Chemical mapping of a 177-nucleotide RNA with 2A3 and DMS. DMS adducts were read by reverse transcription with MarathonRT. For DMS, 2,601 sequencing reads were counted.

RNA sequence: GGGAACGACUCGAGUAGAGUCGAAAACUGAGACUCCUGAAGGACGUGCGAUUGCAGCAUCCAUUGUUUCCCAGUGCGAGCUGUAUGGGGAAGAACCCAGUCCCUGUGAAUUCCCUGCCUGGGAAGGCUCGGAUACAGGGUUCGCCCUGUAUCCGAGAAAAGAAACAACAACAACAAC
Reactivity to 2A3 in 0.01 (KOAc 150mM, MgCl2 10mM, bicine 150mM(pH8.5), 24C), signal-to-noise 4, nucleotides 027 to 126: c020u010g040a000g050a060c010u010c040c000u060g100a120a090g050g030a040c050g030u050g040c040g080a070u020u150g010c000a010g000c000a100u010c030c000a050u020u220g110u060u060u020c010c000c000a020g040u070g050c050g020a030g000c000u000g020u100a090u170g010g000g000g000a000a160g130a110a060c000c000c030a050g030u030c010c000c020u030g000u030g080a040a100u010u010c000c000c000u020g040c010c000u030g020g010g000a000a020g050g000
Reactivity to DMS in 0.01 (KOAc 150mM, MgCl2 10mM, bicine 150mM(pH8.5), 24C), signal-to-noise 1, nucleotides 027 to 126: c080u000g000a240g020a030c040u000c010c020u010g010a140a100g000g000a080c060g000u010g040c010g020a060u000u000g000c060a090g020c060a090u030c060c100a070u020u000g050u010u000u010c010c000c000a020g000u000g040c050g000a070g000c040u000g000u010a010u000g000g000g000g000a080a080g000a110a110c040c050c020a220g000u000c000c000c000u030g000u010g010a100a150u000u020c020c000c000u020g010c020c020u000g000g010g010a040a050g000g000